[RMDB]
RNA sequence: GGGAACGACUCGAGUAGAGUCGAAAAGGUAGGGCAUUCGUGCCCUACCACACCUCUAAGCAGAUUGGCGAGGACGACGUCGCGGCCCACCUUUACCAACAACUACUCUCUCCUUCGGGAGAGAGAACUGAUUUAAUUCAUUCGUGAAUUAAAUCAGAAAAGAAACAACAACAACAAC
Reactivity to DMS in 0.01 (KOAc 150mM, MgCl2 10mM, bicine 150mM(pH8.5), 24C), signal-to-noise 5, nucleotides 027 to 126: g010g010u000a000g010g000g020c000a050u000u010c210g030u000g020c000c000c000u000a000c000c000a040c170a070c030c020u010c100u020a120a160g010c080a070g010a110u010u010g020g010c060g000a100g010g010a060c060g020a050c090g010u000c030g040c040g010g000c030c020c040a060c060c030u010u000u010a130c060c060a060a060c140a060a070c120u010a170c000u000c000u000c000u000c000c000u000u010c170g030g000g000a010g010a010g000a000g000a020a100
Reactivity to 2A3 in 0.01 (KOAc 150mM, MgCl2 10mM, bicine 150mM(pH8.5), 24C), signal-to-noise 7, nucleotides 027 to 126: g000g000u000a000g010g000g000c020a010u020u100c190g100u040g010c000c000c000u000a000c000c000a000c000a000c000c000u020c030u070a080a060g030c040a040g050a300u110u150g070g000c030g020a060g030g040a060c040g010a020c040g030u060c020g000c020g070g040c010c000c010a040c020c000u060u110u120a100c030c020a040a070c010a020a020c040u150a080c000u030c000u000c000u000c010c000u020u080c180g090g000g000a000g000a000g000a000g000a000a000

This 177-nucleotide RNA was probed chemically with DMS and 2A3. It was measured as part of the RMDB library M2PK50. The reactions ran in a buffer of 150 mM KOAc, 10 mM MgCl2 and 150 mM bicine (pH 8.5), at 24 C. DMS adducts were read by reverse transcription with MarathonRT. Values cover nucleotides 27 to 126.